[RMDB]
RNA sequence: GGGAACGACUCGAGUAGAGUCGAAAACCAAGAGUGGCGUUAAUGACAUUUGUAUGUUUGAGAAUAAAACCACUUUGCCUACUAAUAUAGCUUUUGAACUCUAUGCUAAGCGUGCUGUACGCUCGCAGCUAGAUACUAAGUUCGCUUAGUAUCUAGCAAAAGAAACAACAACAACAAC
Reactivity to DMS in 0.01 (KOAc 150mM, MgCl2 10mM, bicine 150mM(pH8.5), 24C), signal-to-noise 8, nucleotides 027 to 126: c040c020a190a060g010a020g020u000g000g010c110g000u000u000a060a090u000g010a050c030a030u000u010u010g010u010a030u000g010u010u000u000g010a170g010a120a090u000a040a070a140a070c010c030a010c000u000u000u000g010c080c040u000a100c130u000a080a100u000a070u010a070g010c050u000u000u000u000g000a070a060c100u000c080u000a080u010g010c060u000a050a080g010c010g010u000g010c090u010g010u000a070c100g010c010u000c160g010c050a100
Reactivity to 2A3 in 0.01 (KOAc 150mM, MgCl2 10mM, bicine 150mM(pH8.5), 24C), signal-to-noise 9, nucleotides 027 to 126: c000c000a010a010g040a010g010u020g000g030c050g030u050u110a070a050u110g020a010c020a030u130u200u250g240u170a070u040g040u010u050u080g090a090g050a090a060u110a090a070a010a010c000c010a010c000u030u020u040g030c010c010u080a100c030u050a090a160u160a060u040a120g020c010u040u080u060u120g040a060a040c020u000c020u070a050u110g010c010u040a040a050g010c000g020u010g010c030u130g060u100a020c060g000c010u010c010g010c010a020
This 177-nucleotide RNA was probed chemically with DMS and 2A3. The RNA was probed in 150 mM KOAc, 10 mM MgCl2 and 150 mM bicine (pH 8.5) at 24 C. The DMS profile rests on 11,495 reads. The data come from the RNA Mapping Database (RMDB), library 15KREP.